[RMDB]
RNA sequence: GGGAACGACUCGAGUAGAGUCGAAAAAGAGGAGGCUGGGUUUUGCGAUCUUUAAGCAGAUGGCAGGUUCACCCCGUACGGUGCGGAAGUUCGCGCUUCCUUGAAACGCGAAAAUCGGACGGUGGCUAAGACCAAUAACAGUUCGCUGUUAUUGGAACGUUCUUGAAAGGUUCGCCUUUCAAGAACGAAAAGAAACAACAACAACAAC
Reactivity to DMS in 0.01 (KOAc 150mM, MgCl2 10mM, bicine 150mM(pH8.5), 24C), signal-to-noise 1, nucleotides 027 to 156: a040g000a120g040g000a030g020g030c060u010g030g040g000u000u000u000u000g060c090g020a050u000c050u000u000u010a080a140g040c140a090g000a070u000g050g020c030a090g010g000u010u000c050a070c010c010c010c010g000u010a060c020g020g000u000g000c070g030g020a080a190g010u000u000c040g040c000g020c010u000u000c000c140u010u000g020a030a030a010c000g000c000g010a030a030a120a090u010c030g010g060a000c040g040g000u010g000g020c050u010a060a130g020a190c000c010a020a040u000a000a020c020a080g010u010u010c300g020c000u010g020u000u000a010u000u010g000g010a030a080
Reactivity to 2A3 in 0.01 (KOAc 150mM, MgCl2 10mM, bicine 150mM(pH8.5), 24C), signal-to-noise 2, nucleotides 027 to 156: a010g050a030g020g000a020g000g020c060u030g020g040g020u040u050u090u060g020c020g040a040u030c040u010u110u110a100a050g040c040a020g010a080u050g040g020c030a030g020g000u020u050c040a040c010c000c000c000g000u010a030c020g000g030u030g030c020g040g050a100a010g070u020u020c010g000c010g030c020u050u000c030c000u060u120g020a040a020a000c020g000c010g020a040a030a010a040u060c010g020g000a010c040g010g050u080g050g000c030u050a080a030g060a070c000c010a000a000u010a000a000c010a020g020u070u090c210g020c070u000g010u010u000a000u000u000g000g000a020a010
Structure probing data (DMS and 2A3) for a 207-nucleotide construct. DMS adducts were read by reverse transcription with MarathonRT. The data come from the RNA Mapping Database (RMDB), library M2RFPK.